[RMDB]
Record summary:
Structure probing data (2A3) for a 207-nucleotide construct. The RNA was probed in 150 mM KOAc, 10 mM MgCl2 and 150 mM bicine (pH 8.5) at 24 C.

RNA sequence: GGGAACGACUCGAGUAGAGUCGAAAACUGCCGCCGGGACGCAGUGAUCCUCGCAGGGUCGCACGGUCGCCUCGGGUCGGCCUCGUGUCGGCUCGACCUGCGAGGGGAGCGAGUGGCGAGCCCGUCCAAAACUUUCUCGCCUUCGGGCGAGAAAGAACACUAACACUUUCUUCGGAAAGUGUUAGUGAAAAGAAACAACAACAACAAC
Reactivity to 2A3 in 0.01 (KOAc 150mM, MgCl2 10mM, bicine 150mM(pH8.5), 24C), signal-to-noise 2, nucleotides 027 to 156: c050u040g030c010c050g050c010c020g100g030g120a050c020g000c030a130g200u010g020a030u010c010c000u000c010g050c030a010g030g040g020u140c030g070c090a080c080g080g050u100c080g020c030c010u040c020g030g000g020u040c010g010g020c010c000u110c100g240u300g000u010c000g010g000c010u020c020g020a040c010c000u010g000c000g000a000g000g000g000g010a010g000c010g010a050g080u120g020g000c000g010a030g010c020c020c010g050u090c030c000a030a130a000a040c000u000u000u030c000u000c000g010c010c000u030u060c210g060g000g010c010g000a000g010a000a000a000g000a000a000